[RMDB]
RNA sequence: GGGAACGACUCGAGUAGAGUCGAAAAGAAAAGUUCUCAGAAAGCGGGCAGCCUAAGGCCGCGAAACGUUAGAGAGCAAACGUGACUAGGCGGAGGCUAGGGUCAUAACUUAGCUUAUGACGAGAAAGGGAUUCUUAUUCUUCGGAAUAAGAAUCCCAAAAGAAACAACAACAACAAC
Reactivity to DMS in 0.01 (KOAc 150mM, MgCl2 10mM, bicine 150mM(pH8.5), 24C), signal-to-noise 3, nucleotides 027 to 126: g020a110a100a070a150g020u000u000c000u010c000a170g000a040a190a150g060c170g000g000g040c080a070g030c000c030u000a110a120g000g020c030c000g000c190g020a070a170a040c000g000u040u020a090g030a140g040a070g060c100a050a050a060c020g000u030g010a210c010u010a160g030g020c000g010g010a080g010g030c000u000a090g010g000g030u000c000a020u020a000a010c020u100u070a090g010c190u000u000a010u000g000a020c010g010a190g020a060a060a130
Reactivity to 2A3 in 0.01 (KOAc 150mM, MgCl2 10mM, bicine 150mM(pH8.5), 24C), signal-to-noise 3, nucleotides 027 to 126: g080a010a120a010a000g000u030u010c030u010c010a050g090a040a160a000g020c080g070g050g000c060a060g050c010c020u090a080a040g050g040c040c030g020c040g040a060a020a010c000g000u030u050a050g030a020g030a020g260c080a050a040a010c030g040u040g030a050c040u070a080g060g020c000g010g100a040g030g010c030u050a010g150g070g020u000c010a010u050a040a020c010u150u240a010g020c040u020u000a020u040g010a030c010g000a000g080a120a010a040

Chemical mapping of a 177-nucleotide RNA with DMS and 2A3. Reactivities are given for positions 27 through 126. Conditions: 150 mM KOAc, 10 mM MgCl2 and 150 mM bicine (pH 8.5), 24 C. In probing experiments dimethyl sulfate is read out at A N1 and C N3, which are open when not base-paired. For DMS, 2,922 sequencing reads were counted. For 2A3, 1,694 sequencing reads were counted. 2A3 adducts were read by reverse transcription with SuperScript II with manganese. It was measured as part of the RMDB library OK1LIB.